Chemical mapping of a 177-nucleotide RNA with 2A3 and DMS.
[RMDB]
RNA sequence: GGGAACGACUCGAGUAGAGUCGAAAAAAUAUGCUCCACAGGCUGCCUGUCCGACAGAGCUUUUAGAUCUUCUGAUCUUUCCCUGCAGCAUAUCGCUUAUGCAUCAAGCGAUUGUCGGAUCACACAAUAUCGAUGGAAUGUUCGCAUUCCAUCGAUAAAAAGAAACAACAACAACAAC
Reactivity to 2A3 in 0.01 (KOAc 150mM, MgCl2 10mM, bicine 150mM(pH8.5), 24C), signal-to-noise 1, nucleotides 027 to 126: a000a000u190a040u070g000c010u000c020c020a010c050a060g060g000c010u000g030c000c010u040g030u000c000c010g010a000c000a000g010a030g030c000u030u040u000u040a010g000a020u050c010u280u060c150u290g000a010u000c000u000u010u010c010c000c000u040g010c040a000g020c000a030u010a000u120c010g010c020u030u030a060u220g140c030a060u120c080a020a000g000c050g000a000u030u040g000u010c010g000g020a060u100c020a080c000a010c030a070a150
Reactivity to DMS in 0.01 (KOAc 150mM, MgCl2 10mM, bicine 150mM(pH8.5), 24C), signal-to-noise 2, nucleotides 027 to 126: a090a060u000a010u000g000c010u010c010c160a120c150a090g000g010c020u000g020c040c100u010g000u010c010c000g000a020c020a070g000a080g010c020u000u000u000u000a050g000a020u000c000u000u020c180u010g000a020u000c010u000u000u000c000c000c000u030g010c050a060g020c030a080u020a040u000c000g020c010u000u000a070u000g000c210a120u000c180a060a020g010c000g000a010u010u000g010u020c000g000g000a070u010c160a090c210a070c120a070a100

About this RNA:
Conditions: 150 mM KOAc, 10 mM MgCl2 and 150 mM bicine (pH 8.5), 24 C. It was measured as part of the RMDB library M2PK90.